[RMDB]
RNA sequence: GGGAACGACUCGAGUAGAGUCGAAAAGUUACAUAGUCUCUCCCAAGAUCCAUUUUUCAGGGAGCCACACAGGUCACACAAGUCUUGGAAGUCAAAAGGAAAUCAUAAGUGCAGGACUAGAGUCACAUGGGUAAGCAUGACUAACCCCAAUCACUUAUGGAUCAUUUAUCUUCGGAUAAAUGAUCCAAAAAGAAACAACAACAACAAC
Reactivity to DMS in 0.01 (KOAc 150mM, MgCl2 10mM, bicine 150mM(pH8.5), 24C), signal-to-noise 2, nucleotides 027 to 156: g020u000u010a060c050a110u010a100g000u000c010u010c030u000c010c010c020a080a100g040a100u000c030c100a210u000u000u040u000u000c090a190g020g020g010a150g030c030c060a060c060a090c060a090g000g030u010c030a020c060a080c050a100a140g040u000c030u010u020g000g040a090a110g000u000c030a040a020a150a130g020g000a070a070a050u000c050a040u000a040a040g030u000g050c070a050g000g010a080c070u020a070g030a070g010u010c020a060c050a050u030g000g020g000u010a030a130g050c070a130u010g000a100c040u010a050a100c020c010c000c000a050a110u010c050a060c030u010u010a160
Reactivity to 2A3 in 0.01 (KOAc 150mM, MgCl2 10mM, bicine 150mM(pH8.5), 24C), signal-to-noise 2, nucleotides 027 to 156: g070u080u120a020c050a030u130a060g060u070c020u010c010u010c010c000c030a010a010g040a030u090c070c020a080u040u060u070u080u120c040a030g000g050g020a010g000c030c000a090c000a010c010a050g040g040u070c010a010c000a000c000a100a010g020u040c020u010u030g040g000a070a060g040u060c020a090a140a000a120g100g020a080a020a060u080c050a030u010a130a000g020u020g040c020a010g030g000a020c020u070a040g000a010g070u010c020a020c020a090u080g040g000g010u110a050a020g050c030a090u060g010a050c000u020a080a140c000c020c010c000a020a030u060c010a010c020u030u020a040